The data come from the RNA Mapping Database (RMDB), library M2RFPK. An RNA of 207 nucleotides, treated with 2A3 and DMS and read out base by base. Values cover nucleotides 27 to 156. For DMS, 4,509 sequencing reads were counted.
RNA sequence: GGGAACGACUCGAGUAGAGUCGAAAAGUAGAGUGUAUCAUGUCAGUAAGCAUGCCGGGGAAUGGUGGUUUACCCCGUUAUCAAAUGAUUACCGACCAAUAAUUGGCGAAACUCGUUUCGCGUUAGCAAAGUCACGGCGUGUUCGCACGCCGUGAAAUCAAGGAUCUAGUUUCGACUAGAUCCUUGAAAAAGAAACAACAACAACAAC
Reactivity to 2A3 in 0.01 (KOAc 150mM, MgCl2 10mM, bicine 150mM(pH8.5), 24C), signal-to-noise 4, nucleotides 027 to 156: g090u110a020g050a010g020u090g030u050a050u110c030a020u040g080u040c030a030g090u110a110a010g020c010a020u050g060c060c000g000g000g000g010a010a010u050g020g020u010g010g030u010u020u070a070c000c000c020c000g020u040u020a030u030c020a010a050a030u060g040a020u090u060a030c000c030g060a070c030c060a040a030u150a160a070u130u130g090g010c020g000a020a030a020c070u060c110g040u000u020u020c030g000c020g020u050u090a040g060c050a050a050a040g050u030c000a000c000g000g000c010g000u010g020u020u050c130g020c080a000c000g000c000c010g000u000g000a000a000a000
Reactivity to DMS in 0.01 (KOAc 150mM, MgCl2 10mM, bicine 150mM(pH8.5), 24C), signal-to-noise 2, nucleotides 027 to 156: g000u010a060g000a110g030u010g000u020a040u000c050a130u020g010u000c040a060g050u000a030a080g010c030a010u010g010c180c030g000g000g030g020a040a090u000g010g020u030g000g010u000u020u000a280c010c010c010c000g040u000u020a080u000c300a050a090a060u000g000a120u000u000a000c000c020g020a070c030c050a040a100u000a070a140u000u010g010g000c000g010a090a040a050c060u020c150g000u000u000u000c030g020c040g020u000u010a130g010c100a080a080a120g030u000c010a020c010g010g040c010g030u030g000u000u000c300g040c020a000c040g020c030c010g000u000g000a000a020a100